[RMDB]
RNA sequence: GGGAACGACUCGAGUAGAGUCGAAAAAAUACUUCCACGUGUCAACCAUUUGUUACCAUGGAGUACAUUUUGCAUAGGAAAAGUAGGAUAAUUACCUGAUUAUUUGCCUUUAUUGACCAAUUUUCAAAAUAAUGUUUGUUCUAUUAUGUCCAAUAAACCCCAAAGUAAGUUUCGACUUACUUUGGGGAAAAGAAACAACAACAACAAC
Reactivity to DMS in 0.01 (KOAc 150mM, MgCl2 10mM, bicine 150mM(pH8.5), 24C), signal-to-noise 1, nucleotides 027 to 156: a110a050u000a010c040u010u020c020c020a020c030g060u000g000u000c100a050a060c020c260a250u030u010u010g030u000u010a100c030c030a050u010g020g000a130g000u000a040c010a140u010u000u000u000g050c090a110u010a170g020g000a020a050a080a080g020u010a070g010g000a040u000a070a000u000u000a080c110c100u000g000a080u000u020a040u000u000u000g030c040c000u010u010u010a210u030u020g010a140c070c040a000a000u000u000u030u000c000a030a090a050a070u010a030a090u010g030u000u000u010g000u000u000c020u000a050u000u000a130u010g010u040c010c010a070a180u010a080a030a250
Reactivity to 2A3 in 0.01 (KOAc 150mM, MgCl2 10mM, bicine 150mM(pH8.5), 24C), signal-to-noise 1, nucleotides 027 to 156: a000a000u100a020c030u110u040c030c000a020c010g100u140g050u100c070a070a060c030c070a070u090u080u130g030u050u100a020c040c060a030u030g020g060a030g000u040a010c010a020u000u100u050u050g030c000a020u060a030g000g030a050a040a020a000g020u040a010g000g060a000u010a080a020u140u110a080c030c060u020g020a020u000u060a030u040u050u090g110c000c030u150u030u030a130u080u110g010a000c010c010a040a110u000u020u070u120c010a020a060a030a080u130a030a100u060g000u030u060u010g010u000u060c000u020a020u080u030a060u240g010u070c010c020a040a040u300a140a070a250

Chemical mapping of a 207-nucleotide RNA with DMS and 2A3.
Values are in units of 0.01, from 0 to 300, in steps of 10.
The DMS profile rests on 1,757 reads.
Source: RMDB library OK3TST, as collected in RNAgym.
Conditions: 150 mM KOAc, 10 mM MgCl2 and 150 mM bicine (pH 8.5), 24 C.